[RMDB]
RNA sequence: GGGAACGACUCGAGUAGAGUCGAAAAUCUGAGAAUGGUGCUGUAAGAGAAGAGGCACCUGCAGCUUGCCUGUUUUAACUGCUCCAGUCGCACGUUUUACAACUGGCUCUGAACCUACACUGGUAAGGCGUACUACCGGAUUCGUCCGGUAGUACGCAAAAGAAACAACAACAACAAC
Reactivity to 2A3 in 0.01 (KOAc 150mM, MgCl2 10mM, bicine 150mM(pH8.5), 24C), signal-to-noise 1, nucleotides 027 to 126: u060c030u020g020a030g110a140a140u150g000g000u020g000c030u030g090u280a180a110g080a020g000a250a070g060a170g020g000c000a000c000c000u000g040c000a000g000c040u130u140g020c010c030u060g100u030u070u050u060a040a070c060u040g020c040u000c010c050a020g120u040c020g040c040a020c070g050u080u000u060u150a060c070a050a020c040u020g000g040c000u030c000u060g080a090a050c010c010u030a020c060a030c140u070g050g000u050a050a020g180
Reactivity to DMS in 0.01 (KOAc 150mM, MgCl2 10mM, bicine 150mM(pH8.5), 24C), signal-to-noise 2, nucleotides 027 to 126: u000c070u000g000a140g010a040a090u010g000g010u000g000c000u010g000u040a080a200g010a190g010a110a100g000a260g010g000c020a030c030c020u000g050c000a010g000c110u000u000g020c000c000u000g040u010u000u000u000a050a150c030u000g020c030u000c030c110a020g010u000c090g010c030a070c130g000u000u000u000u000a100c140a060a060c030u000g000g030c020u010c010u010g000a150a100c060c010u010a040c100a090c100u010g000g000u020a100a140g010

Chemical mapping of a 177-nucleotide RNA with 2A3 and DMS.
Reactivities are given for positions 27 through 126.